[RMDB]
RNA sequence: GGGAACGACUCGAGUAGAGUCGAAAAAAUAUCAUUAAGAAUAACACCUCUCUGUUCCAUGAACUCGUACAGCAACUUUAAAUGAUAGCAGUAUGCCUUAAUGGUAUUAGGAGACUUACCAGUAUUAGCCUGUGAACCAGUUCGCUGGUUCACAGGCAAAAGAAACAACAACAACAAC
Reactivity to 2A3 in 0.01 (KOAc 150mM, MgCl2 10mM, bicine 150mM(pH8.5), 24C), signal-to-noise 1, nucleotides 027 to 126: a000a000u100a000u000c000a000u020u020a000a000g070a030a120u120a300a030c000a100c060c000u060c000u030c000u060g010u050u030c090c070a140u100g030a090a140c060u000c060g040u210a010c000a060g170c120a060a000c010u130u070u250a010a010a150u100g050a020u050a120g020c040a020g060u000a060u270g120c020c000u000u000a000a000u000g000g020u000a020u000u010a050g020g000a030g040a060c000u090u090a020c040c000a000g000u000a030u060u160a060